Chemical mapping of a 177-nucleotide RNA with DMS and 2A3. The 2A3 profile rests on 9,626 reads.
RNA sequence: GGGAACGACUCGAGUAGAGUCGAAAAGAUAUGGAGCGAGGUAGGGAGCUGUCUCGGAAACGAGGCAGCAUCGAUCUACUCGCUCCUAAGUCAAAGGUGAGGUUCAUCUUCGGAUGAACCUCACCAAGGUAUAUAUUCACUUCGGUGAAUAUAUACCAAAAGAAACAACAACAACAAC
Reactivity to DMS in 0.01 (KOAc 150mM, MgCl2 10mM, bicine 150mM(pH8.5), 24C), signal-to-noise 3, nucleotides 027 to 126: g000a020u000a300u010g010g010a020g010c010g010a020g000g020u010a010g010g000g010a040g010c000u000g020u000c000u000c010g000g000a070a050a140c000g020a010g000g000c000a010g010c010a020u000c100g000a110u020c000u000a040c000u000c010g010c000u000c000c000u000a010a060g010u010c020a080a160a140g000g010u000g000a010g010g010u000u000c000a000u000c000u000u010c160g010g000a020u000g010a000a000c010c000u010c000a000c000c010a010a020
Reactivity to 2A3 in 0.01 (KOAc 150mM, MgCl2 10mM, bicine 150mM(pH8.5), 24C), signal-to-noise 2, nucleotides 027 to 126: g010a000u040a010u100g000g010a000g010c020g000a030g070g210u130a030g060g180g040a030g020c000u000g010u010c000u000c000g000g000a030a030a010c000g000a000g020g000c000a000g010c010a010u040c010g040a050u020c010u000a010c010u010c000g000c000u000c000c000u000a000a000g000u000c010a040a020a080g000g000u020g010a010g030g000u030u020c000a010u000c000u070u110c300g030g000a000u000g000a010a010c010c000u000c000a000c000c000a010a000
Reactivities are rounded to 0.1 and cut off at 0 and 3.